Chemical mapping of a 177-nucleotide RNA with DMS and 2A3. For 2A3 the reverse transcriptase was SuperScript II with manganese. The 2A3 profile rests on 26,965 reads. For DMS, 6,859 sequencing reads were counted. For DMS the reverse transcriptase was MarathonRT.
RNA sequence: GGGAACGACUCGAGUAGAGUCGAAAACGAAUGGAGUUCGCUCCAUUCGAAAUCCCAGGGAACGACUCGAGUAGAGUCGAAAAUCGCACUCAACUCAACUCAAAAGCGAAUGCUUCGGCAUUCGCAACCUAUAAGGGAUGUUCGCAUCCCUUAUAGGAAAAGAAACAACAACAACAAC
Reactivity to DMS in 0.01 (KOAc 150mM, MgCl2 10mM, bicine 150mM(pH8.5), 24C), signal-to-noise 4, nucleotides 027 to 126: c020g000a030a000u000g000g000a020g000u000u010c270g020c010u000c000c010a020u000u000c010g010a010a070a210u000c000c000c000a140g000g010g000a030a030c030g000a020c030u000c060g000a030g000u000a040g000a000g010u000c000g000a010a030a110a120u010c070g010c140a070c030u000c030a070a060c040u000c060a120a150c180u020c090a100a090a080a130g010c000g000a010a010u000g010c000u000u020c220g020g000c000a020u000u000c000g010c000a020a020
Reactivity to 2A3 in 0.01 (KOAc 150mM, MgCl2 10mM, bicine 150mM(pH8.5), 24C), signal-to-noise 3, nucleotides 027 to 126: c010g000a000a000u010g000g010a030g020u040u080c080g110c070u030c000c000a000u020u000c000g000a010a010a010u040c000c000c000a000g010g010g000a010a010c010g000a000c010u010c020g000a010g030u040a010g020a000g000u000c000g000a000a000a000a010u090c010g020c050a040c020u060c010a020a080c020u020c060a020a050c030u030c130a080a080a060a030g000c000g000a000a000u010g000c000u040u060c230g100g000c000a000u010u000c000g000c000a000a010